[RMDB]
RNA sequence: GGGAACGACUCGAGUAGAGUCGAAAACUGAGCCGUGCCCGUGCAGCGAGCUCUCUGGCGGCCCGGCGCUCCAGGUCCUGGAAGCCCUCCUUCCCGAGGAGUCGGUAGAUCUCCCUCACCGGGCGCCGCUCCAUGCUAAAUUCGUUUAGCAUGGAGCAAAAGAAACAACAACAACAAC
Reactivity to DMS in 0.01 (KOAc 150mM, MgCl2 10mM, bicine 150mM(pH8.5), 24C), signal-to-noise 3, nucleotides 027 to 126: c060u000g000a020g020c030c060g020u000g010c040c060c100g040u010g000c100a090g020c110g010a110g010c030u000c040u010c070u010g010g000c030g010g010c020c040c020g010g010c070g000c090u000c010c050a060g000g000u000c100c040u000g000g000a080a170g000c040c010c030u000c010c030u000u000c050c020c020g020a130g000g010a110g010u000c040g000g020u000a060g020a080u000c020u000c040c020c030u000c040a100c060c040g000g000g000c050g000c030c060
Reactivity to 2A3 in 0.01 (KOAc 150mM, MgCl2 10mM, bicine 150mM(pH8.5), 24C), signal-to-noise 1, nucleotides 027 to 126: c010u050g020a010g000c010c010g000u030g000c000c000c070g070u170g040c050a030g070c000g090a040g020c010u050c020u030c030u120g010g020c030g040g100c000c010c020g000g000c030g020c020u000c000c010a050g070g090u110c020c040u050g070g000a060a050g020c000c000c040u000c000c000u020u060c020c000c000g000a050g000g000a010g040u060c080g010g040u060a080g010a200u070c020u000c030c020c000u000c010a030c000c010g010g000g030c010g010c000c010